[RMDB]
RNA sequence: GGGAACGACUCGAGUAGAGUCGAAAAGAUAUGGAAAUGUGUAGACAUGCUCCGUCGGAAACGACAGGAGCAACAGCUACCAUUUCCUAAGUCAAAAGCUCCUUGGAGGUUCGCCUCCAAGGAGCAAGCUCACUUCUUAGUUCGCUAAGAAGUGAGCAAAAGAAACAACAACAACAAC
Reactivity to DMS in 0.01 (KOAc 150mM, MgCl2 10mM, bicine 150mM(pH8.5), 24C), signal-to-noise 1, nucleotides 027 to 126: g010a020u020a180u000g010g000a010a020a010u000g000u020g020u000a000g010a140c140a260u000g000c000u000c000c000g000u000c010g000g010a060a030a110c000g000a010c010a110g030g020a000g020c000a000a010c300a100g000c000u000a020c010c000a020u000u000u000c000c010u000a000a060g020u000c000a090a080a140a140g000c000u000c000c000u030u000g010g000a030g010g010u000u010c260g020c010c000u000c000c000a000a000g010g000a010g020c000a000a010
Reactivity to 2A3 in 0.01 (KOAc 150mM, MgCl2 10mM, bicine 150mM(pH8.5), 24C), signal-to-noise 2, nucleotides 027 to 126: g020a000u030a000u070g020g060a060a000a030u060g220u100g020u050a000g100a230c150a230u030g030c000u030c000c010g010u000c020g000g040a050a040a000c030g040a020c130a300g020g000a020g080c020a010a000c010a020g060c000u000a000c000c000a010u010u010u000c000c000u020a010a000g020u000c010a090a070a130a170g010c000u000c000c000u000u010g000g000a020g050g000u120u130c270g050c050c000u000c020c020a000a000g000g000a000g010c000a000a000
Description
Conditions: 150 mM KOAc, 10 mM MgCl2 and 150 mM bicine (pH 8.5), 24 C. Structure probing data (DMS and 2A3) for a 177-nucleotide construct. DMS adducts were read by reverse transcription with MarathonRT. For DMS, 1,362 sequencing reads were counted. The 2A3 profile rests on 3,133 reads.